[RMDB]
RNA sequence: GGGAACGACUCGAGUAGAGUCGAAAAGGAUGAUGUGGGGUCACCCACAUUGGGGGGAGUGUGAGGGAGCCACCGCCUGUGGGAUCUUGGCAGGAGGACAGCAGGGUGACUGGGGCCAGCAGAUGUCCUUUAUAGACUAUUUCGAUAGUCUAUAAAGAAAAGAAACAACAACAACAAC
Reactivity to 2A3 in 0.01 (KOAc 150mM, MgCl2 10mM, bicine 150mM(pH8.5), 24C), signal-to-noise 3, nucleotides 027 to 126: g050g020a090u130g000a000u020g020u020g000g010g010g060u140c120a160c060c000c000a010c000a010u020u020g000g000g000g000g000g010a100g020u100g030u050g040a120g010g020g010a020g020c010c000a020c020c010g020c000c020u060g000u070g030g060g030a070u040c040u070u110g060g020c040a030g010g060a010g020g010a030c030a020g030c020a010g000g000g050u040g010a030c030u030g000g000g040g000c020c020a020g000c010a010g030a100u050g070u080c010
Reactivity to DMS in 0.01 (KOAc 150mM, MgCl2 10mM, bicine 150mM(pH8.5), 24C), signal-to-noise 8, nucleotides 027 to 126: g000g010a130u010g010a020u000g020u000g010g010g010g000u020c300a120c010c000c000a010c010a020u000u000g010g010g000g010g010g000a120g010u010g010u000g000a150g000g010g000a090g010c020c030a050c040c070g010c060c030u010g020u000g010g010g010a070u000c060u010u000g010g010c050a060g010g010a080g000g000a080c080a090g010c070a070g000g000g020u000g010a070c080u000g010g010g010g000c040c040a060g010c080a060g000a080u000g010u000c050